[RMDB]
RNA sequence: GGGAACGACUCGAGUAGAGUCGAAAAUUAUGACAUCUCAGGCACUCUUUGAGUCCUUAGAGUUUACUGAAUUGUCUUUUACUAAUUACAAGCUCCAGUCUCAGAUUGUAACUGGCCUUUUUAAAGAUACGAGAGCGCUUCGGCGCUCUCAAAAGAAACAACAACAACAAC
Reactivity to 2A3 in 0.01 (KOAc 150mM, MgCl2 10mM, bicine 150mM(pH8.5), 24C), signal-to-noise 2, nucleotides 027 to 129: u050u010a110u070g000a000c000a010u030c070u000c040a020g000g000c080a000c010u000c100u070u120u210g040a060g050u080c020c000u040u050a010g000a000g090u000u030u100a090c000u000g060a020a020u000u000g000u000c000u020u060u010u070a130c040u020a140a160u200u050a020c040a050a000g000c060u000c020c020a020g130u010c000u010c090a030g030a170u050u110g040u000a000a000c000u000g080g000c010c010u180u170u000u000u070a000a130a020g070a040u140a150c010